Structure probing data (DMS and 2A3) for a 177-nucleotide construct. It was measured as part of the RMDB library OK1LIB. High 2A3 reactivity points to a flexible backbone, as in loops and unpaired stretches. DMS adducts were read by reverse transcription with MarathonRT.
RNA sequence: GGGAACGACUCGAGUAGAGUCGAAAACAGACUCGAGCGAAAGCUCGGCGAAAGCCGCGUACAUGUGAGCGUCGGCAGGUGUACAGUCGACAGUUACUCUUCGGAGUAACAAUAGAAACAACAACAACCUCGUGGUAGUAUUCGUACUACCACGAGGAAAAGAAACAACAACAACAAC
Reactivity to DMS in 0.01 (KOAc 150mM, MgCl2 10mM, bicine 150mM(pH8.5), 24C), signal-to-noise 2, nucleotides 027 to 126: c050a180g010a060c070u000c010g000a050g000c040g010a160a070a200g020c000u000c000g000g010c000g010a200a160a170g000c180c000g060c030g000u000a050c080a090u000g000u050g000a090g010c040g000u030c030g000g040c020a020g000g010u000g000u000a010c000a020g000u000c010g020a140c300a050g030u000u000a000c000u000c000u000u050c100g010g000a000g000u000a010a000c000a020a130u100a040g000a070a170a120c100a010a040c100a040a120c170a050a120
Reactivity to 2A3 in 0.01 (KOAc 150mM, MgCl2 10mM, bicine 150mM(pH8.5), 24C), signal-to-noise 3, nucleotides 027 to 126: c050a010g050a000c010u030c020g000a000g000c010g060a110a020a030g010c010u000c000g000g020c000g100a070a090a050g080c070c020g000c010g030u070a050c040a080u110g070u090g110a110g000c030g060u090c010g130g000c010a020g020g050u060g000u040a100c040a020g010u010c000g030a010c020a050g030u000u000a000c000u000c020u010u080c250g080g000a000g000u000a000a000c000a000a000u190a070g130a070a130a010c050a000a000c010a000a030c020a020a090